[RMDB]
RNA sequence: GGGAACGACUCGAGUAGAGUCGAAAAAGGAGGUGAUGCUAUGGAGACGUUUCAGGCUCUUCAAUUAAUGUUCUUAUUUGGAAUGUUUAUUCUAGCGCUUUUAACGUUUAUCCAGAAAAUGAAAUAGGAAGCAAUAAGAGUUCGCUCUUAUUGCUUCAAAAGAAACAACAACAACAAC
Reactivity to DMS in 0.01 (KOAc 150mM, MgCl2 10mM, bicine 150mM(pH8.5), 24C), signal-to-noise 2, nucleotides 027 to 126: a070g000g000a020g020g010u000g010a050u010g000c120u010a130u000g000g010a040g000a030c010g000u000u000u000c100a010g000g000c000u010c000u000u000c050a010a010u000u000a030a010u010g010u010u000c000u010u010a240u000u010u000g000g010a020a010u000g010u000u000u000a010u010u000c050u000a010g030c210g000c010u000u000u000u000a010a020c000g010u000u000u000a120u010c000c000a050g010a050a050a070a080u010g000a040a070a120u010a100g000
Reactivity to 2A3 in 0.01 (KOAc 150mM, MgCl2 10mM, bicine 150mM(pH8.5), 24C), signal-to-noise 1, nucleotides 027 to 126: a000g050g010a040g000g060u080g030a060u090g030c070u090a030u100g020g010a030g000a010c000g000u030u020u000c030a000g010g000c010u030c000u050u000c020a010a010u010u040a000a000u000g050u020u040c000u080u300a300u210u140u250g030g000a000a000u000g000u000u030u020a040u020u000c010u000a000g020c010g000c000u030u070u020u000a000a000c000g000u010u050u000a070u040c010c010a030g100a000a090a010a060u110g050a060a060a000u040a100g180

Overview:
The record gives the reactivity of an RNA of 177 nucleotides to DMS and 2A3. 2A3 adducts were read by reverse transcription with SuperScript II with manganese. The RNA was probed in 150 mM KOAc, 10 mM MgCl2 and 150 mM bicine (pH 8.5) at 24 C. For DMS the reverse transcriptase was MarathonRT.